[RMDB]
RNA sequence: GGGAACGACUCGAGUAGAGUCGAAAAUGCCACCUGCUGGAGACCAUGUACUCAGACAUACGCACCUAUGGGGGACAUUUCAUAUUUAAACAACAGUCUCUGAGUUACUUAACUUGUGUCCCAACAAACUAAAUGAGCAGUUCGCUGCUCAUUUAGUAAAAGAAACAACAACAACAAC
Reactivity to DMS in 0.01 (KOAc 150mM, MgCl2 10mM, bicine 150mM(pH8.5), 24C), signal-to-noise 4, nucleotides 027 to 126: u000g020c030c030a090c080c040u000g010c070u000g010g010a090g000a130c080c100a030u010g010u010a080c050u010c070a070g000a080c090a060u010a110c110g020c100a110c050c070u000a060u000g020g020g010g010g010a060c060a030u000u000u000c120a040u010a090u000u000u010a020a050a110c110a050a070c080a070g010u000c100u000c030u000g000a110g010u000u000a040c080u000u020a070a150c100u000u010g010u000g020u010c000c000c010a050a070c190a050a080
Reactivity to 2A3 in 0.01 (KOAc 150mM, MgCl2 10mM, bicine 150mM(pH8.5), 24C), signal-to-noise 4, nucleotides 027 to 126: u080g030c000c010a040c010c020u070g000c060u040g060g000a110g020a110c010c020a040u070g020u040a040c020u010c050a010g020a070c010a040u200a040c060g000c040a050c010c030u060a130u130g100g020g000g030g000a020c010a030u070u170u050c060a030u130a120u150u210u150a110a100a020c050a020a000c000a040g040u000c010u000c000u060g000a020g040u030u030a030c040u100u130a110a030c020u050u040g010u010g030u060c010c010c010a000a030c030a040a110